RNA sequence: GGGAACGACUCGAGUAGAGUCGAAAAAUACCCCAGCAGUAGGACUCAGCGACCGUCACAACAAGGUUGUGCUGGUAUCCGACGGUCGUAUAGCCCUGUCUUGCAGGUUGCCUUGCACUGACGUGCCACACCAUUUACAGAUUCGUCUGUAAAUGAAUGCUGACUUAGUAUUCGUACUAAGUCAGCAAAAAGAAACAACAACAACAAC
Reactivity to 2A3 in 0.01 (KOAc 150mM, MgCl2 10mM, bicine 150mM(pH8.5), 24C), signal-to-noise 2, nucleotides 027 to 156: a000u220a050c020c000c000c000a000g000c000a010g020u140a010g000g010a060c020u030c100a010g000c000g000a000c000c000g010u010c010a020c020a110a210c080a130a110g150g000u070u060g010u100g080c050u030g090g040u070a070u060c030c040g020a010c000g000g000u010c000g000u070a080u120a070g000c000c010c000u020g040u130c080u040u120g000c030a020g100g000u070u140g010c020c000u010u050g010c010a020c060u140g040a050c130g060u080g010c030c000a080c000a040c000c030a000u000u000u000a000c000a010g010a030u000u090c080g110u000c100u000g000u020a000a000a000u000g040a010a060
Reactivity to DMS in 0.01 (KOAc 150mM, MgCl2 10mM, bicine 150mM(pH8.5), 24C), signal-to-noise 3, nucleotides 027 to 156: a120u000a130c050c010c010c080a200g030c030a050g010u000a020g020g000a050c010u010c140a230g020c010g020a020c000c000g010u000c020a260c060a120a070c050a090a090g030g020u010u010g010u000g000c060u000g000g020u000a050u010c080c020g000a030c010g030g010u000c020g050u010a080u000a030g030c010c000c010u010g020u000c000u000u000g020c030a150g020g010u000u000g000c020c170u000u000g010c020a090c040u010g000a140c170g020u000g020c010c070a100c050a100c110c000a010u000u000u020a010c000a020g020a060u000u020c300g030u000c000u010g020u010a000a010a020u000g010a060a090
Annotation: Chemical mapping of a 207-nucleotide RNA with 2A3 and DMS. The reactions ran in a buffer of 150 mM KOAc, 10 mM MgCl2 and 150 mM bicine (pH 8.5), at 24 C. DMS adducts were read by reverse transcription with MarathonRT. It was measured as part of the RMDB library M2RFPK. For DMS, 5,853 sequencing reads were counted.